Annotation
Conditions: 150 mM KOAc, 10 mM MgCl2 and 150 mM bicine (pH 8.5), 24 C. Structure probing data (DMS and 2A3) for a 177-nucleotide construct. The 2A3 profile rests on 60,865 reads. For DMS the reverse transcriptase was MarathonRT.
RNA sequence: GGGAACGACUCGAGUAGAGUCGAAAAACGCACAUGUGAGUCAUGUCCUGAUUGCGUACUGUCCUACAGUACGCAAACGGCUUCUGUAGGACAGAGGCCUCAGGUAGUCGGAAUCACUGAUUAGCGAGGUCAGCAUUGUAUUCGUACAGUGCUGACCAAAAGAAACAACAACAACAAC
Reactivity to DMS in 0.01 (KOAc 150mM, MgCl2 10mM, bicine 150mM(pH8.5), 24C), signal-to-noise 9, nucleotides 027 to 126: a110c020g020c010a060c030a020u010g010u000g000a060g000u000c020a060u000g000u000c010c000u000g010a240u000u000g010c000g010u000a020c000u000g000u000c170c110u000a110c000a010g000u000a000c030g010c010a000a010a090c160g010g000c000u000u000c000u000g010u000a100g010g040a300c010a010g000a020g010g000c000c040u000c010a010g000g010u000a050g000u000c110g000g000a130a100u000c060a020c010u000g000a100u010u010a060g010c020g000a140
Reactivity to 2A3 in 0.01 (KOAc 150mM, MgCl2 10mM, bicine 150mM(pH8.5), 24C), signal-to-noise 8, nucleotides 027 to 126: a000c010g000c000a010c000a020u070g010u010g040a040g050u040c010a010u050g040u020c000c000u020g010a030u010u050g000c000g000u000a010c000u000g030u120c030c010u040a030c000a000g000u000a000c000g000c000a000a010a000c030g010g000c000u000u000c000u000g030u050a090g060g160a010c000a000g010a000g000g000c000c000u010c000a000g010g000u010a020g060u040c070g020g010a050a050u000c010a010c030u010g010a060u030u060a020g000c010g020a020